[RMDB]
RNA sequence: GGGAACGACUCGAGUAGAGUCGAAAAGGGGUCCUGUGUGGUUAGCGACAUGAGUCAACUGAAGCCUCCACGGUUGUACUCAACAGCGCUAACGUAACAUCACAGGACGGAGGCACCCAAAACAUCACAAUCCUGGUUCGCCAGGAUUGUGAUGUAAGGUGCCUUUUGGCUUCGGCCAAAAGGCACCAAAAGAAACAACAACAACAAC
Reactivity to 2A3 in 0.01 (KOAc 150mM, MgCl2 10mM, bicine 150mM(pH8.5), 24C), signal-to-noise 1, nucleotides 027 to 156: g120g010g020g020u000c040c000u000g000u000g020u020g000g000u010u010a000g000c000g300a300c130a110u060g000a010g000u010c000a010a000c000u000g000a120a000g030c000c020u000c010c010a020c000g000g000u020u020g070u150a070c000u030c020a060a070c160a070g100c000g000c000u000a000a000c000g000u010a020a000c000a020u190c040a000c000a000g000g000a000c010g000g010a000g000g000c010a040c000c000c000a080a120a000a000c000a000u000c000a000c010a000a010u020c000c000u010g040g030u080u150c300g090c120c000a000g000g020a000u000u000g000u000g000a000u000g000u000a000a000
Chemical mapping of a 207-nucleotide RNA with 2A3. The reactions ran in a buffer of 150 mM KOAc, 10 mM MgCl2 and 150 mM bicine (pH 8.5), at 24 C. It was measured as part of the RMDB library RNAMAK.